[RMDB]
The record gives the reactivity of an RNA of 177 nucleotides to 2A3 and DMS.
For 2A3, 3,562 sequencing reads were counted.
As a SHAPE reagent, 2A3 marks flexible, mostly unpaired nucleotides at the ribose 2'-OH.
For DMS, 1,286 sequencing reads were counted.
Conditions: 150 mM KOAc, 10 mM MgCl2 and 150 mM bicine (pH 8.5), 24 C.
It was measured as part of the RMDB library M2PK90.
RNA sequence: GGGAACGACUCGAGUAGAGUCGAAAAGCAAAGCAGAUGAAGCACAUGAAGCACAUGAAGCACAUGAAGCACAUGAAGCACAUGAAGCACAUGAAGCACAUGAAGCACAUGAAGCACAUGAAAAAAACGAACAUAUUCUGUUCGCAGAAUAUGUUCGAAAAGAAACAACAACAACAAC
Reactivity to 2A3 in 0.01 (KOAc 150mM, MgCl2 10mM, bicine 150mM(pH8.5), 24C), signal-to-noise 3, nucleotides 027 to 126: g060c020a030a070a010g030c050a020g010a090u050g060a100a020g040c020a000c010a050u030g080a100a020g020c010a000c000a010u020g070a090a030g000c000a010c000a050u030g070a130a030g020c010a010c000a040u030g060a130a020g050c030a020c000a080u100g090a120a030g030c010a030c000a020u050g070a100a010g000c010a000c000a060u050g050a100a010g020c000a010c000a030u010g040a050a020g000c000a020c020a070u140g070a110a020a020a010a030a010a010
Reactivity to DMS in 0.01 (KOAc 150mM, MgCl2 10mM, bicine 150mM(pH8.5), 24C), signal-to-noise 2, nucleotides 027 to 126: g010c070a060a030a040g000c000a020g000a060u000g000a060a040g040c040a070c030a010u010g000a150a050g030c040a150c010a010u010g000a100a140g050c000a210c060a060u000g000a070a040g000c020a150c040a070u010g020a030a100g000c030a130c060a070u010g010a070a170g030c050a070c040a060u000g000a080a130g030c100a130c050a080u010g010a090a090g000c040a170c030a060u000g000a040a120g000c020a160c050a030u000g010a030a020a020a060a000a050a170